[RMDB]
RNA sequence: GGGAACGACUCGAGUAGAGUCGAAAAGCAUCCCUGCUUUACAAACACCAGCAAGAUCAGGGCGCAUUAACUUGGGCUAAACGCCUGGCCGAUCAGUAUGUUUUGCCGCGUGACGCCAAAACGGGCCCGCGGUACAGUAGUUCGCUACUGUACCGCGAAAAGAAACAACAACAACAAC
Reactivity to DMS in 0.01 (KOAc 150mM, MgCl2 10mM, bicine 150mM(pH8.5), 24C), signal-to-noise 2, nucleotides 027 to 126: g000c110a120u000c070c040c040u000g000c060u000u010u010a120c220a100a280a090c090a060c070c080a140g030c130a090a040g000a090u000c070a130g000g000g010c030g020c050a110u000u000a030a110c090u000u000g010g020g000c010u040a070a200a090c070g030c060c120u060g000g010c060c110g000a030u000c050a100g000u000a040u000g020u000u020u000u000g000c000c000g000c000g000u010g020a060c090g030c000c000a010a010a070a060c090g010g000g000c030c090
Reactivity to 2A3 in 0.01 (KOAc 150mM, MgCl2 10mM, bicine 150mM(pH8.5), 24C), signal-to-noise 1, nucleotides 027 to 126: g030c010a020u110c020c000c000u020g000c010u030u150u100a110c090a100a120a010c050a050c050c070a050g050c050a040a040g000a120u120c060a080g000g000g000c050g000c050a030u140u080a010a140c070u090u090g150g000g110c010u050a130a080a040c040g000c020c060u070g000g000c000c000g030a040u100c020a030g200u110a060u280g080u050u010u040u040g060c010c010g060c020g040u050g070a050c080g080c040c010a020a130a000a000c060g000g000g000c000c000